This 207-nucleotide RNA was probed chemically with DMS and 2A3.
RNA sequence: GGGAACGACUCGAGUAGAGUCGAAAAUUACAACAAAUAAUCACGGAUGGCGUAUUAACAUGCAUUGCAUUUACUAAUGGCGCAACUACAAGGAUCAUUGAUACGCAAAAGUAUCCAUCACCACUCGGAUUUGCAUGCACUAUUGGCGGUAAAUCAAUACUGUUAUUUUUUUCGAAAAAUAACAGUAAAAAGAAACAACAACAACAAC
Reactivity to DMS in 0.01 (KOAc 150mM, MgCl2 10mM, bicine 150mM(pH8.5), 24C), signal-to-noise 5, nucleotides 027 to 156: u000u000a110c060a070a120c040a060a070a130u000a090a110u000c040a090c060g010g010a070u000g010g030c040g040u010a050u000u000a080a090c070a080u010g010c060a300u000u000g010c020a090u010u000u010a300c050u010a050a050u010g030g020c030g020c050a050a090c030u000a050c040a020a070g000g010a300u000c080a110u000u000g010a030u000a000c000g030c030a080a100a070a220g010u000a030u000c010c070a080u010c030a020c010c010a050c030u010c040g010g010a120u000u000u000g020c030a060u010g010c020a050c050u000a100u000u000g010g010c040g010g010u000a040a060a090u000c050a030a210
Reactivity to 2A3 in 0.01 (KOAc 150mM, MgCl2 10mM, bicine 150mM(pH8.5), 24C), signal-to-noise 8, nucleotides 027 to 156: u140u100a060c040a080a010c030a050a150a080u180a070a070u200c070a060c130g060g010a040u060g070g000c030g010u030a050u040u050a080a050c050a060u030g020c040a040u030u190g010c020a030u060u090u150a120c090u120a080a090u080g090g000c030g000c070a050a040c050u140a060c040a090a090g060g010a040u080c010a030u030u110g010a010u010a020c030g000c050a040a120a000a080g050u050a020u020c010c010a030u070c050a020c070c010a050c050u080c090g050g010a020u030u010u030g010c030a050u060g020c010a020c110u130a110u190u100g070g000c020g000g020u030a040a030a010u080c000a010a040

For 2A3, 7,985 sequencing reads were counted.
For DMS, 11,177 sequencing reads were counted.